[RMDB]
RNA sequence: GGGAACGACUCGAGUAGAGUCGAAAAGAAAUUACGUUUCCUUUACACUUCUCAAACCGGGAUCAAGAGAAGCAAAGCAUCCCUCAUAUCCACGAUGGAGGGUGUCGUGGAGUAUACUGUACCAAUAAGAGCGAACACGGCUUCGGCCGUGUUCGAAGACUAGUCUGAAGUUCGCUUCAGACUAGUCAAAAGAAACAACAACAACAAC
Reactivity to DMS in 0.01 (KOAc 150mM, MgCl2 10mM, bicine 150mM(pH8.5), 24C), signal-to-noise 2, nucleotides 027 to 156: g000a060a060a060u000u010a120c140g010u000u000u000c010c010u000u000u000a150c070a090c030u010u030c010u000c020a090a110a120c070c060g000g030g000a170u000c040a160a300g000a030g020a060a030g040c030a070a070a120g030c020a080u000c010c000c010u000c100a100u010a050u000c000c000a040c010g010a060u020g010g020a040g040g020g050u000g020u000c010g000u020g010g000a090g050u010a050u000a110c100u010g000u010a160c050c020a050a080u000a080a090g000a100g020c030g020a020a010c010a000c030g070g030c030u000u000c300g060g020c000c020g000u000g000u010u000c000g000a010a070
Reactivity to 2A3 in 0.01 (KOAc 150mM, MgCl2 10mM, bicine 150mM(pH8.5), 24C), signal-to-noise 5, nucleotides 027 to 156: g030a010a070a020u180u100a040c050g010u010u020u030c010c000u020u060u110a070c060a020c000u030u020c000u030c070a140a080a050c060c050g040g010g020a060u090c060a250a040g000a000g030a050a020g040c100a060a010a000g010c000a020u030c000c030c000u040c040a090u090a030u110c010c000a010c030g000a010u030g050g120a060g050g040g000u070g000u000c010g000u000g000g010a010g030u020a030u020a090c120u080g070u130a090c040c010a060a040u080a200a040g040a020g150c000g000a010a000c010a000c000g020g000c030u050u070c120g030g000c010c000g000u000g000u000u000c000g000a000a000